[RMDB]
RNA sequence: GGGAACGACUCGAGUAGAGUCGAAAAAUCAAAAUAUGAAUGAAACACGGUUGCGUUCUUUAGCCAAAACAGAGUUAAAUAAACGUAAGUCGGCAGUUAUGUCAUAUGAGAUUACUUCUACUGAUUUGGAAGUUACGUAUCCGCACGAGAUUAUAUAACGAUUAUCCUAUUUCGAUAGGAUAAUCGUAAAAGAAACAACAACAACAAC
Reactivity to DMS in 0.01 (KOAc 150mM, MgCl2 10mM, bicine 150mM(pH8.5), 24C), signal-to-noise 4, nucleotides 027 to 156: a050u000c030a010a090a070a030u000a010u000g000a110a080u000g000a260a110a090c020a070c000g000g020u000u000g010c000g020u000u000c040u000u000u000a050g000c000c000a040a050a150a210c210a280g030a060g020u000u000a000a030a020u000a020a030a040c010g030u000a020a040g020u010c010g030g030c060a090g020u010u000a090u000g000u000c040a030u000a030u000g000a300g000a050u000u000a050c010u000u000c000u000a260c180u020g020a210u000u000u000g020g020a040a070g000u000u000a060c070g010u000a090u000c010c030g030c090a110c080g010a160g000a080u000u010a080u010a130u000a130
Reactivity to 2A3 in 0.01 (KOAc 150mM, MgCl2 10mM, bicine 150mM(pH8.5), 24C), signal-to-noise 6, nucleotides 027 to 156: a010u040c030a040a010a000a010u030a010u020g020a020a010u060g030a120a060a020c040a010c020g020g000u010u010g000c000g000u000u000c000u030u010u010a010g010c020c010a040a090a090a110c120a110g130a000g110u000u020a010a010a020u090a060a040a010c000g010u010a020a030g150u210c000g040g060c130a050g030u090u040a090u200g110u010c000a000u010a010u020g010a030g000a020u010u010a020c010u010u000c000u030a080c080u090g160a290u140u110u120g040g020a050a020g000u040u070a060c040g010u040a100u070c020c020g120c080a060c080g100a080g030a190u210u110a100u100a040u080a160
This 207-nucleotide RNA was probed chemically with DMS and 2A3. The DMS profile rests on 6,340 reads. The RNA was probed in 150 mM KOAc, 10 mM MgCl2 and 150 mM bicine (pH 8.5) at 24 C.